[RMDB]
RNA sequence: GGGAACGACUCGAGUAGAGUCGAAAAUGGCUACGAACCAGUUGGCCGCGGGUUCGAAUCCUGCCCGGUGCACCAUAAAUAAAAAGUCUUUCGAUAAAUCGAAAGACUUUUUAUUUUCUGCUCCCAAACUACCUACCCUAUUCGUAGGGUAGGUAGUAAAAGAAACAACAACAACAAC
Reactivity to DMS in 0.01 (KOAc 150mM, MgCl2 10mM, bicine 150mM(pH8.5), 24C), signal-to-noise 2, nucleotides 027 to 126: u010g000g000c080u010a200c030g010a050a040c030c020a060g010u010u010g030g000c050c070g010c100g010g000g010u000u000c020g020a120a100u000c040c000u000g000c040c020c020g030g030u000g020c020a020c150c080a080u010a040a010a010u000a000a010a010a010a000g010u000c000u000u000u000c000g000a080u010a080a160a120u000c000g010a000a010a000g010a010c000u000u000u000u010u000a010u010u000u000u010c120u010g000c070u000c010c010c070a070a150